[RMDB]
RNA sequence: GGGAACGACUCGAGUAGAGUCGAAAAUACUAUGUGCCAGGCACUGCUCUGGGCGCUGGGACCUGCACCUGGGCUUUUUCGUCAUGGUGCUUUUAUAGCCUAGUGGGAGAGUUGGUGAAGUAGAUAGCCGUGGUCCUGACUUCGGUCAGGACUACGGAAAAGAAACAACAACAACAAC
Reactivity to DMS in 0.01 (KOAc 150mM, MgCl2 10mM, bicine 150mM(pH8.5), 24C), signal-to-noise 3, nucleotides 027 to 126: u040a140c070u000a030u010g000u000g000c030c050a110g000g000c040a090c050u020g000c010u010c020u000g020g000g010c030g050c040u020g000g040g000a060c160c090u020g010c030a010c020c010u000g020g000g000c030u000u010u020u050u030c140g000u000c010a170u010g000g000u000g000c020u020u000u000u020a080u050a090g000c020c010u010a020g010u000g000g000g020a030g000a060g010u000u000g020g010u000g010a060a160g000u020a010g010a120u030a070g020
Reactivity to 2A3 in 0.01 (KOAc 150mM, MgCl2 10mM, bicine 150mM(pH8.5), 24C), signal-to-noise 5, nucleotides 027 to 126: u180a020c040u030a040u100g160u050g060c030c020a110g020g020c050a020c070u030g030c010u020c020u040g230g130g020c020g000c000u010g000g030g020a070c010c060u040g010c010a010c020c000u150g060g010g000c020u210u100u040u120u280c120g010u010c010a020u070g010g000u020g020c000u000u030u010u020a080u040a020g010c000c000u010a010g010u020g020g140g010a020g000a000g000u160u300g010g000u010g040a030a010g020u040a030g030a100u080a030g030
Background:
This 177-nucleotide RNA was probed chemically with DMS and 2A3. The DMS profile rests on 6,109 reads. The 2A3 profile rests on 3,688 reads. It was measured as part of the RMDB library OK1LIB.